This 177-nucleotide RNA was probed chemically with 2A3 and DMS.
Reactivities are given for positions 27 through 126.
For DMS the reverse transcriptase was MarathonRT.
It was measured as part of the RMDB library TTRDES.
The reactions ran in a buffer of 150 mM KOAc, 10 mM MgCl2 and 150 mM bicine (pH 8.5), at 24 C.
[RMDB]
RNA sequence: GGGAACGACUCGAGUAGAGUCGAAAAGAUAUGGACAUUAGGCAGCUUUUGACGCGAUGAGGGUCGGAAACGACCCUCGUCGCGAUAAGCUGCUAAUGUCCUAAGUCAAAGACCACUUCGGUGGUCAGACGAUUAACAGGUUCGCCUGUUAAUCGUCAAAAGAAACAACAACAACAAC
Reactivity to 2A3 in 0.01 (KOAc 150mM, MgCl2 10mM, bicine 150mM(pH8.5), 24C), signal-to-noise 2, nucleotides 027 to 126: g020a020u050a070u160g000g000a000c010a010u020u040a180g230g250c010a020g000c010u050u060u150u300g200a160c070g000c000g000a020u010g010a000g000g000g000u010c000g010g080a030a120a050c020g000a000c010c000c000u000c000g000u000c020g000c000g010a000u000a000a010g000c000u000g000c010u000a000a000u000g010u020c000c000u000a040a010g000u000c010a040a050a170g000a010c000c000a010c000u080u100c300g090g020u000g000g000u030c010a010
Reactivity to DMS in 0.01 (KOAc 150mM, MgCl2 10mM, bicine 150mM(pH8.5), 24C), signal-to-noise 2, nucleotides 027 to 126: g000a060u020a300u000g000g010a000c000a010u000u000a060g020g030c000a000g000c020u010u000u010u000g010a280c120g020c000g020a010u000g000a010g050g000g010u000c000g010g000a050a100a180c010g000a020c000c000c000u000c000g000u000c000g010c000g020a010u000a010a010g030c000u000g000c000u000a000a000u000g000u000c000c000u000a010a060g020u000c040a130a130a160g010a010c000c000a010c000u000u020c180g050g000u000g010g020u000c000a050